[RMDB]
RNA sequence: GGGAACGACUCGAGUAGAGUCGAAAAGAUUCUUUGGGAUCCUUCCUUUCUUCAAACGGAACGAAAAGAGAUAGAAUCAGGCCGAUUCCCGAAAUGCCUUUCUGGAUAUUCCUCAAUGUCCCGGCUACUGUCAUAUUAGUUUCGACUAAUAUGACAGAAAAGAAACAACAACAACAAC
Reactivity to 2A3 in 0.01 (KOAc 150mM, MgCl2 10mM, bicine 150mM(pH8.5), 24C), signal-to-noise 9, nucleotides 027 to 126: g020a030u060u050c030u100u120u130g090g010g040a070u040c010c020u020u030c010c000u040u040u020c050u080u060c060a130a150a100c120g060g020a040a030c040g070a090a060a050a050g100a020g010a020u090a110g060a040a030u040c030a030g070g030c020c020g070a090u030u030c000c000c000g010a060a070a060u120g010c020c000u060u110u060c040u050g020g010a030u020a080u100u050c020c020u060c060a060a070u070g020u030c020c010c000g020g000c020u060a050
Reactivity to DMS in 0.01 (KOAc 150mM, MgCl2 10mM, bicine 150mM(pH8.5), 24C), signal-to-noise 7, nucleotides 027 to 126: g000a030u010u000c010u000u030u040g010g010g010a120u000c020c050u010u000c010c020u000u020u000c050u010u020c100a090a110a130c160g000g000a050a060c170g000a040a060a070a070g010a110g010a100u020a040g010a060a150u010c030a040g010g000c030c080g000a190u010u000c010c000c000g010a050a090a050u020g000c030c020u000u000u010c040u020g000g020a080u020a060u020u000c040c030u000c070a030a070u010g010u000c010c010c060g000g000c060u010a130